[RMDB]
RNA sequence: GGGAACGACUCGAGUAGAGUCGAAAACGAAGGAAAGCGUGACCAGCUAAUCUUCUGCAACGCCAUUACGAGGACUGCCCUUAGAGGCUCAUGGCGAUAGGUCACCCCGCCGGUCGGUCAGCUGCUUAUACCCGUGCACGGUUCGCCGUGCACGGAAACUGUAAAGGUACUUCGGUACCUUUACAGUAAAAGAAACAACAACAACAAC
Reactivity to DMS in 0.01 (KOAc 150mM, MgCl2 10mM, bicine 150mM(pH8.5), 24C), signal-to-noise 1, nucleotides 027 to 156: c030g010a160a060g000g010a070a050a040g050c050g010u000g020a050c040c050a200g000c070u000a040a160u010c050u000u010c050u080g000c050a090a170c030g020c030c010a130u000u000a070c080g000a160g000g010a090c070u000g030c010c010c020u000u000a140g020a110g030g050c010u000c090a070u000g000g030c000g000a090u000a030g010g000u030c060a150c070c030c040c030g010c060c010g020g030u000c020g000g030u000c080a110g020c000u000g000c000u000u000a150u000a130c090c000c000g000u000g010c000a030c010g000g010u000u000c260g070c000c000g000u010g050c000a010c050g020g000a030a020
Reactivity to 2A3 in 0.01 (KOAc 150mM, MgCl2 10mM, bicine 150mM(pH8.5), 24C), signal-to-noise 2, nucleotides 027 to 156: c020g020a010a000g060g010a230a020a010g010c030g010u030g010a020c000c060a020g010c030u060a110a070u070c090u140u050c050u070g050c070a120a060c020g020c020c000a030u070u130a080c160g040a070g070g050a110c080u130g020c000c000c000u050u090a090g030a140g100g000c000u010c040a000u000g000g030c010g080a130u130a090g010g020u030c020a040c010c000c000c010g060c020c070g040g000u080c050g040g010u030c040a020g020c030u050g010c050u220u020a050u100a100c050c010c000g020u010g040c000a010c000g040g000u040u030c090g030c080c000g000u010g000c010a010c000g000g000a000a020